[RMDB]
RNA sequence: GGGAACGACUCGAGUAGAGUCGAAAAUCCUAAGUCCCACGCCAUAAUGAGGUCUCAGGGAGUUCGUCGGAAACGACGAACAUCGAUCUGAGACUACCCACCAUUAUGAGCGUGGGAUAUGGAAAAACGAGAAUUUUGAUUCGUCAAAAUUCUCGAACUAAUUAGGGGGGUUCGCCCCCCUAAUUAGAAAAGAAACAACAACAACAAC
Reactivity to DMS in 0.01 (KOAc 150mM, MgCl2 10mM, bicine 150mM(pH8.5), 24C), signal-to-noise 1, nucleotides 027 to 156: u000c000c000u010a080a160g040u000c010c010c010a100c030g030c000c010a020u020a030a020u010g000a140g070g000u000c000u000c000a000g040g010g000a090g040u020u020c030g050u010c030g010g000a240a140a260c000g020a000c010g000a010a010c000a130u000c190g020a030u000c000u020g000a060g030a060c020u010a000c000c020c040a300c120c020a010u010u000a030u000g000a110g010c020g030u030g000g030g000a000u000a030u000g020g000a070a060a040a100a140c020g010a010g010a010a020u000u000u000u000g000a070u010u000c300g030u000c000a000a000a040a020u000u000c000u000c010g000a000a030
The record gives the reactivity of an RNA of 207 nucleotides to DMS. DMS adducts were read by reverse transcription with MarathonRT.